[RMDB]
RNA sequence: GGGAACGACUCGAGUAGAGUCGAAAAGUCUGAAGACGGAUGGAGUUGAUUUGGCCUACAUGAGUUUCAUGAACGGCAAAACGCAGAAAUCAAUAAAGAUCGACAACCUGCAUGUGCGCACCUCAGCGGUCAAGUUAAGAUUCGUCUUAACUUGACCAAAAGAAACAACAACAACAAC
Reactivity to DMS in 0.01 (KOAc 150mM, MgCl2 10mM, bicine 150mM(pH8.5), 24C), signal-to-noise 6, nucleotides 027 to 126: g010u000c030u000g010a070a080g000a110c150g020g000a070u000g010g000a180g020u010u010g020a080u010u000u000g000g000c010c010u010a300c020a060u000g000a080g020u010u010u000c020a020u000g000a070a150c270g000g010c030a040a030a070a090c150g000c060a070g000a090a090a040u000c050a050a060u010a050a100a130g010a040u010c060g000a090c060a070a070c080c030u000g020c060a080u000g010u000g010c050g010c080a080c040c050u000c100a100g010c210
Reactivity to 2A3 in 0.01 (KOAc 150mM, MgCl2 10mM, bicine 150mM(pH8.5), 24C), signal-to-noise 5, nucleotides 027 to 126: g020u010c020u050g080a090a030g060a050c060g020g000a010u060g020g030a060g050u050u070g050a160u060u040u100g080g000c000c000u020a010c010a020u060g030a070g270u110u160u050c010a010u020g030a080a010c050g000g000c020a030a040a000a000c080g000c010a010g160a040a080a010u040c020a000a020u100a120a090a010g050a050u040c020g000a020c010a040a050c010c010u030g000c030a030u100g030u040g050c050g010c020a040c020c020u070c020a030g060c040
An RNA of 177 nucleotides, treated with DMS and 2A3 and read out base by base. The DMS profile rests on 4,990 reads. For 2A3, 6,456 sequencing reads were counted. 2A3 adducts were read by reverse transcription with SuperScript II with manganese. Reactivities are given for positions 27 through 126. For DMS the reverse transcriptase was MarathonRT.